Chemical mapping of a 177-nucleotide RNA with DMS and 2A3. For DMS the reverse transcriptase was MarathonRT. The RNA was probed in 150 mM KOAc, 10 mM MgCl2 and 150 mM bicine (pH 8.5) at 24 C. For DMS, 758 sequencing reads were counted.

RNA sequence: GGGAACGACUCGAGUAGAGUCGAAAAACUUCUUCUCUGCUCGUUAAACCAAUAGCAUGUCAGCUCCACGCAAAGCCAGAUUGCCUUCUGUUAAGGCUGUUGACAUGAGCAUGGAAGACAUGGCCGCAUGCACCUGCUCAUUCGUGAGCAGGUGCAUAAAAGAAACAACAACAACAAC
Reactivity to DMS in 0.01 (KOAc 150mM, MgCl2 10mM, bicine 150mM(pH8.5), 24C), signal-to-noise 1, nucleotides 027 to 126: a140c110u050u000c000u040u000c070u000c000u050g000c000u100c000g000u000u000a030a190a300c030c140a120a100u140a300g000c070a000u000g040u000c000a160g060c140u000c000c000a050c040g000c000a000a230a040g000c000c050a050g040a120u000u000g000c050c000u000u000c150u160g000u000u000a030a040g000g000c000u050g000u000u000g070a000c110a000u000g000a300g000c000a040u000g000g000a000a000g000a050c000a130u000g000g000c030c190g010c110
Reactivity to 2A3 in 0.01 (KOAc 150mM, MgCl2 10mM, bicine 150mM(pH8.5), 24C), signal-to-noise 3, nucleotides 027 to 126: a000c040u020u010c000u030u000c000u000c000u000g000c000u000c040g040u040u050a130a100a080c010c000a030a060u180a030g030c010a020u000g020u010c000a020g060c090u010c000c000a000c050g030c020a090a050a040g030c010c040a020g080a160u080u130g040c040c000u050u020c060u120g130u240u300a040a040g000g000c010u010g030u070u060g070a190c200a300u110g010a020g000c030a050u010g040g000a020a010g000a020c000a050u040g080g050c000c000g160c040